The record gives the reactivity of an RNA of 177 nucleotides to 2A3 and DMS. 2A3 adducts were read by reverse transcription with SuperScript II with manganese. DMS adducts were read by reverse transcription with MarathonRT.

[RMDB]
RNA sequence: GGGAACGACUCGAGUAGAGUCGAAAAGUGGAUUUGUUCGCAAAUCCACAAAUCCCAACAAGCCUGGCUGGCAGCCUAACAACCGAGCUACGCGGCGUAGCAAAAGGUUACACUUCGGUGUAACCAAGGUAUUAUCCUUGUUCGCAAGGAUAAUACCAAAAGAAACAACAACAACAAC
Reactivity to 2A3 in 0.01 (KOAc 150mM, MgCl2 10mM, bicine 150mM(pH8.5), 24C), signal-to-noise 6, nucleotides 027 to 126: g010u000g000g000a000u000u010u020g010u020u020c070g000c120a000a000a000u010c000c000a000c000a000a000a000u010c000c000c000a000a030c030a020a010g060c010c040u080g030g000c010u030g050g010c080a020g000c000c060u070a050a030c040a010a010c020c030g040a050g020c000u020a010c030g040c060g270g000c080g030u020a010g010c000a010a070a020a080g010g000u000u000a000c010a000c000u030u070c220g080g000u000g000u010a000a000c000c010a000a010
Reactivity to DMS in 0.01 (KOAc 150mM, MgCl2 10mM, bicine 150mM(pH8.5), 24C), signal-to-noise 4, nucleotides 027 to 126: g020u000g000g010a020u000u000u000g020u000u010c230g030c010a000a010a020u000c000c000a010c010a020a070a120u000c010c000c000a110a140c230a040a140g010c060c040u010g020g020c030u000g010g000c050a070g000c010c030u020a080a060c140a060a030c060c030g000a100g000c010u010a020c030g010c040g000g000c050g010u010a020g020c040a100a050a080a090g000g010u000u000a010c000a000c010u000u000c170g030g040u000g010u000a000a000c000c010a010a020